[RMDB]
RNA sequence: GGGAACGACUCGAGUAGAGUCGAAAACUCGCUGCGGCGGCCGUGGAGCAGGAAGAGCGCGGCCGCACCGCGGUGUUCGUCGGCCAAGACGGCCAGGUUGUGGGUGUGCUCGCGGUAGCGGACACGGGGCCCUGUGGUUAUUCGUAACCACAGGGCCAAAAGAAACAACAACAACAAC
Reactivity to 2A3 in 0.01 (KOAc 150mM, MgCl2 10mM, bicine 150mM(pH8.5), 24C), signal-to-noise 2, nucleotides 027 to 126: c020u010c020g000c020u010g010c030g030g000c010g010g040c000c000g020u010g060g130a250g050c120a080g030g160a130a030g030a020g060c000g000c000g000g010c000c000g000c020a010c000c000g000c010g010g020u030g010u050u070c060g070u020c080g020g000c020c010a040a080g170a160c090g010g010c020c000a020g040g020u030u070g000u100g050g030g030u030g010u040g030c020u010c010g060c000g040g100u090a020g030c000g000g010a010c010a020c030g040g040